RNA sequence: GGGAACGACUCGAGUAGAGUCGAAAAGCGCCUCCCCCACAGUUCUCCGAUUCCAAUUUUCCGCAAGGAAUGUCAUCGCGACCGCCCCGCCGGUGUCUGGACACCCGCAGUACGUCGCAGCUUCGAUCUGAGGUCUAUAAUUCGUUAUAGACCUCAGAAAAGAAACAACAACAACAAC
Reactivity to 2A3 in 0.01 (KOAc 150mM, MgCl2 10mM, bicine 150mM(pH8.5), 24C), signal-to-noise 4, nucleotides 027 to 126: g080c070g050c000c000u030c000c000c010c000c010a050c010a030g020u050u030c040u000c010c020g060a080u080u010c030c000a050a090u050u000u100u060c040c010g050c050a040a030g030g010a070a040u060g080u080c050a110u100c050g000c020g040a020c020c010g040c020c020c000c000g020c020c010g010g010u030g010u030c050u100g070g020a010c010a030c030c010c030g000c010a010g030u040a030c030g000u020c010g000c050a020g010c030u060u050c010g030a070u000
Reactivity to DMS in 0.01 (KOAc 150mM, MgCl2 10mM, bicine 150mM(pH8.5), 24C), signal-to-noise 3, nucleotides 027 to 126: g020c100g000c000c000u020c010c030c010c010c020a100c130a060g010u030u000c000u000c020c020g020a070u000u000c010c020a080a150u000u020u000u010c020c040g000c120a090a160g020g000a030a060u010g000u010c090a080u020c060g010c050g000a050c070c080g010c030c060c020c030g010c020c120g000g000u010g000u000c050u030g010g000a100c060a050c070c030c100g030c070a090g010u010a180c180g000u010c010g010c060a110g000c100u010u000c000g000a260u010